An RNA of 177 nucleotides, treated with 2A3 and DMS and read out base by base.
RNA sequence: GGGAACGACUCGAGUAGAGUCGAAAAGCAGACCGCUCCGCCACAGGGGCAAGGCGCCAGCGCGCAGAAGGCCAAUGACGAGAAGGCCAAGACCGAGGCCGAGCGCAAGGCCGAGCGCCGCGCCGCUCGCGGUCUGUGAUUUCGAUCACAGACCGCGAAAAGAAACAACAACAACAAC
Reactivity to 2A3 in 0.01 (KOAc 150mM, MgCl2 10mM, bicine 150mM(pH8.5), 24C), signal-to-noise 2, nucleotides 027 to 126: g120c140a000g000a130c000c030g020c000u000c020c000g120c120c070a120c060a030g000g020g000g050c030a030a110g000g000c000g000c070c100a040g000c030g000c010g030c040a000g070a180a120g000g000c010c010a080a280u140g120a110c020g000a070g020a210a100g030g000c000c000a060a000g120a110c080c030g060a170g000g000c000c000g060a080g100c020g000c020a000a000g000g000c000c020g000a020g000c010g000c020c000g000c000g000c010c000g010c000u000
Reactivity to DMS in 0.01 (KOAc 150mM, MgCl2 10mM, bicine 150mM(pH8.5), 24C), signal-to-noise 1, nucleotides 027 to 126: g000c110a190g000a080c050c030g010c000u000c000c140g040c090c010a050c050a210g000g000g000g050c090a000a050g000g000c000g000c000c160a100g000c010g000c000g110c060a100g000a060a130g010g090c000c060a060a110u040g000a300c110g000a110g010a000a170g000g000c000c000a070a000g000a170c220c250g000a210g110g000c030c000g000a250g000c000g000c000a120a260g000g000c000c000g010a210g000c000g000c000c300g000c090g050c020c000g000c240u140

For 2A3, 982 sequencing reads were counted.